[RMDB]
RNA sequence: GGGAACGACUCGAGUAGAGUCGAAAACGGCCGUGGCCACGAUAGGGUCUUUGGUGCGCAGGCGCAAGUUCUUGGUGGCGAUGAACUUGCACCACGUUAGGCACUCGUCGGCCGAGGCCAGUGCGUCUACCAGGUUUUCGCUGCGCAGCACCAGGUCCAUAUGAUGAGCGUUCGCGCUCAUCAUAUGAAAAGAAACAACAACAACAAC
Reactivity to 2A3 in 0.01 (KOAc 150mM, MgCl2 10mM, bicine 150mM(pH8.5), 24C), signal-to-noise 1, nucleotides 027 to 156: c050g000g000c010c010g030u180g030g000c010c000a020c050g050a070u210a220g070g010g020u020c000u010u090u100g150g000u100g000c050g000c100a100g000g040c020g000c010a000a010g010u040u040c010u060u130g090g000u090g060g060c070g050a050u170g020a010a020c000u000u020g000c000a010c010c040a070c060g050u070u090a090g000g000c020a040c040u030c020g060u010c040g000g040c000c010g010a030g010g000c000c010a000g010u010g040c030g000u000c000u020a040c000c070a040g020g010u010u030u050u200c070g020c050u020g050c070g000c040a040g000c010a020c020c000a050g060g020u030c020
Overview
An RNA of 207 nucleotides, treated with 2A3 and read out base by base. 2A3 adducts were read by reverse transcription with SuperScript II with manganese. The reactions ran in a buffer of 150 mM KOAc, 10 mM MgCl2 and 150 mM bicine (pH 8.5), at 24 C.